Chemical mapping of a 177-nucleotide RNA with DMS and 2A3. For DMS the reverse transcriptase was MarathonRT.

RNA sequence: GGGAACGACUCGAGUAGAGUCGAAAAGUCCCCACUUUCGAGUGGGGACAAUCAAAGUUUUGGCACUCGCAGCCCGCAGCGUAGGUGCUCCCACGCGGUGCAUAACUGCCUACUUCGGUAGGCAGAACUCCUACUAUUGCUUCGGCAAUAGUAGGAGAAAAGAAACAACAACAACAAC
Reactivity to DMS in 0.01 (KOAc 150mM, MgCl2 10mM, bicine 150mM(pH8.5), 24C), signal-to-noise 2, nucleotides 027 to 126: g000u000c000c000c000c000a000c000u000u010u010c160g010a010g030u000g020g000g000g000a020c000a000a020u000c090a070a080a140g020u000u010u040u010g030g000c000a030c010u010c040g030c040a140g000c010c010c020g040c100a090g000c050g000u010a080g010g010u000g010c090u010c020c010c030a130c180g000c040g000g000u000g000c080a070u010a100a180c000u010g000c000c000u000a000c000u010u020c160g040g000u010a000g000g020c000a000g000a070a100
Reactivity to 2A3 in 0.01 (KOAc 150mM, MgCl2 10mM, bicine 150mM(pH8.5), 24C), signal-to-noise 2, nucleotides 027 to 126: g010u010c000c010c000c000a000c010u070u090u110c210g110a000g000u000g010g000g000g010a000c000a010a010u060c030a010a070a090g030u000u080u220u150g060g050c000a010c020u110c080g040c030a050g050c020c010c020g050c050a070g010c030g060u070a130g030g090u110g060c020u050c000c010c000a050c030g000c030g000g000u050g030c020a020u070a240a100c020u000g000c000c010u000a000c000u020u020c140g110g000u020a000g000g000c000a010g000a000a000